The data come from the RNA Mapping Database (RMDB), library OK3TST.
An RNA of 207 nucleotides, treated with 2A3 and read out base by base.
Values are in units of 0.01, from 0 to 300, in steps of 10.
For 2A3, 334 sequencing reads were counted.
[RMDB]
RNA sequence: GGGAACGACUCGAGUAGAGUCGAAAAAGUGGUGCAAUCAUAGCUCACUAUAACCUCAAAUGCCUGAAUUCAGGCAAUCCUUCCAUCUCAGCCUCCUGAGAAGCUGGGACUACAGGUGUGCACCACCACACCCAACUAAUUUUUCUAUUUUUUGUAAGGUCCUCACGGGAUUCGUCCCGUGAGGACCAAAAGAAACAACAACAACAAC
Reactivity to 2A3 in 0.01 (KOAc 150mM, MgCl2 10mM, bicine 150mM(pH8.5), 24C), signal-to-noise 1, nucleotides 027 to 156: a000g010u000g020g020u000g010c020a100a120u130c040a040u040a120g050c070u070c030a110c060u020a060u060a140a060c020c010u040c000a020a070a040u040g030c010c000u080g140a300a300u300u250c000a000g020g000c060a000a020u030c000c040u050u090c040c000a070u020c000u000c000a060g030c060c010u080c000c130u150g170a140g000a090a000g000c000u000g000g000g000a000c000u000a020c000a000g000g000u010g050u020g090c000a000c000c000a000c000c000a000c020a050c030c010c010a050a020c050u100a050a050u080u020u140u300u300c110u030a220u110u120u060u000u100u030g060u040a210a000